[RMDB]
RNA sequence: GGGAACGACUCGAGUAGAGUCGAAAAAUGAGGUCGUACAAUGUGUUGUCAUUUGGGGUAGAUUUAUGACGGUGUGUACGACCAAGGGUAUGUUUGAGUAAUCUACCCCAAAUUCAUGCAUACUCUAGGUUGACGUUGAUUUCGAUCAGCGUCAACCAAAAGAAACAACAACAACAAC
Reactivity to DMS in 0.01 (KOAc 150mM, MgCl2 10mM, bicine 150mM(pH8.5), 24C), signal-to-noise 2, nucleotides 027 to 126: a080u030g000a080g010g000u000c000g010u020a000c010a020a060u050g010u030g000u010u030g010u010c070a060u010u020u020g010g010g020g010u000a010g010a130u020u040u040a040u000g000a010c060g010g020u020g010u010g030u020a000c020g020a000c000c000a020a020g000g020g000u000a010u000g000u000u000u000g000a050g020u020a080a050u020c010u000a010c030c010c020c000a030a000a040u010u000c010a010u000g030c020a010u000a000c000u010c010u020a160
Reactivity to 2A3 in 0.01 (KOAc 150mM, MgCl2 10mM, bicine 150mM(pH8.5), 24C), signal-to-noise 3, nucleotides 027 to 126: a000u180g070a060g010g000u000c010g010u000a020c000a040a100u070g110u030g070u200u180g000u110c000a120u010u090u280g000g000g000g030u010a000g030a050u050u270u170a000u070g020a010c040g110g060u210g000u010g000u020a000c040g000a000c000c000a000a010g010g000g000u000a010u010g030u000u000u020g010a010g000u030a030a030u000c000u000a000c000c000c000c000a020a000a010u030u010c000a000u020g000c000a010u010a000c020u000c020u030a100
The record gives the reactivity of an RNA of 177 nucleotides to DMS and 2A3. Source: RMDB library OK1LIB, as collected in RNAgym. The 2A3 profile rests on 2,425 reads. The DMS profile rests on 6,837 reads.